[RMDB]
RNA sequence: GGGAACGACUCGAGUAGAGUCGAAAAGAUAUGGAUCAAGAACUACGAGGAAACUGCGAUGAAAUCGGAAACGAUGGAGCAGAUAACUCGCUUGAUCCUAAGUCAAAGCCGUUGUUCGCAACGGCAACACUGUUCUAAAGUUCGCUUUAGAACAGUGAAAAGAAACAACAACAACAAC
Reactivity to DMS in 0.01 (KOAc 150mM, MgCl2 10mM, bicine 150mM(pH8.5), 24C), signal-to-noise 6, nucleotides 027 to 126: g000a020u000a300u000g010g010a010u000c000a010a010g000a110a060c120u000a300c040g010a010g010g000a130a230a160c000u000g010c000g000a130u010g000a090a110a010u000c000g010g000a080a060a120c010g010a030u000g000g000a100g000c000a000g000a040u010a070a210c010u010c010g000c010u000u000g000a020u000c000c000u000a020a050g020u000c040a090a090a130g010c000c000g000u000u000g010u000u000c220g010c020a010a010c010g010g000c020a040a060
Reactivity to 2A3 in 0.01 (KOAc 150mM, MgCl2 10mM, bicine 150mM(pH8.5), 24C), signal-to-noise 8, nucleotides 027 to 126: g030a010u060a020u120g000g000a000u010c010a010a000g020a140a140c190u210a060c300g010a010g010g040a290a300a060c010u000g040c010g300a300u100g090a140a100a000u020c010g000g020a040a030a020c000g000a000u020g000g010a020g000c000a000g010a020u080a050a010c000u000c000g010c000u000u010g000a000u000c000c000u000a050a010g000u010c040a090a090a030g000c000c010g010u010u010g030u040u110c280g020c150a000a000c000g000g000c000a000a000